This 177-nucleotide RNA was probed chemically with DMS and 2A3. The RNA was probed in 150 mM KOAc, 10 mM MgCl2 and 150 mM bicine (pH 8.5) at 24 C.
RNA sequence: GGGAACGACUCGAGUAGAGUCGAAAAUGUAGUGGAAGAAACAGCGGCGCAGGAACGCGUCGGGCAGCUCCUUCUCGUUGUUCGACGUGAUGAUGACGAGCGGGCGGUGCCGCGCGCGCACGGUUUACGUCAGGGUAAUGUUCGCAUUACCCUGACGAAAAGAAACAACAACAACAAC
Reactivity to DMS in 0.01 (KOAc 150mM, MgCl2 10mM, bicine 150mM(pH8.5), 24C), signal-to-noise 3, nucleotides 027 to 126: u010g000u010a080g000u020g000g010a100a060g030a080a080a090c090a060g020c080g000g070c040g040c100a110g010g000a120a100c090g000c010g020u000c020g040g000g010c010a020g000c010u020c060c050u010u010c070u010c050g010u000u000g020u010u000c020g000a060c130g010u000g010a050u000g020a050u020g000a060c040g000a070g000c110g000g000g010c080g020g010u000g020c000c020g000c070g000c060g000c040g000c070a090c080g010g000u000u000u000a120
Reactivity to 2A3 in 0.01 (KOAc 150mM, MgCl2 10mM, bicine 150mM(pH8.5), 24C), signal-to-noise 2, nucleotides 027 to 126: u170g020u070a060g060u010g050g070a100a030g020a060a140a020c040a020g080c000g030g010c000g010c030a060g120g080a150a030c020g010c010g010u040c060g000g000g000c000a010g030c000u050c020c000u110u060c060u040c060g000u000u010g050u060u020c040g060a100c140g090u060g050a110u130g010a000u030g000a020c010g000a020g000c000g000g030g000c030g000g050u010g020c000c000g060c000g000c010g010c010g000c050a030c040g030g040u050u110u070a060